The data come from the RNA Mapping Database (RMDB), library OK3TST. Structure probing data (2A3) for a 207-nucleotide construct.

[RMDB]
RNA sequence: GGGAACGACUCGAGUAGAGUCGAAAAGCGACGAGGUGACUCGUCGCACGGCUCAGUGGAGCCGAAUAGGCGGUACCGCUAUCCGCCGAUGAUGUGCGUAGUGUGCAAGGUGAGAGCACUCUACGAUGAACACAUCAUCAAAGAGAUAAUAGCGGAAGCGUCGUCGCUGGUUCGCCAGCGACGACGCAAAAGAAACAACAACAACAAC
Reactivity to 2A3 in 0.01 (KOAc 150mM, MgCl2 10mM, bicine 150mM(pH8.5), 24C), signal-to-noise 2, nucleotides 027 to 156: g010c000g000a000c000g000a000g010g050u090g050a120c000u000c010g010u000c000g000c000a000c000g000g000c000u010c030a170g130u220g300g000a010g000c020c000g000a050a130u090a080g000g010c030g000g000u070a220c000c000g000c000u000a020u030c000c000g000c000c010g000a000u010g020a000u000g000u000g000c000g000u010a020g000u000g010u000g000c020a100a120g080g090u180g070a090g010a030g020c000a000c000u000c000u000a000c030g000a000u080g020a030a010c000a000c010a000u010c000a000u020c020a000a110a020g080a010g010a060u070a180a010u020a010g000c000g000g000a020a000

The 2A3 profile rests on 1,263 reads. Conditions: 150 mM KOAc, 10 mM MgCl2 and 150 mM bicine (pH 8.5), 24 C.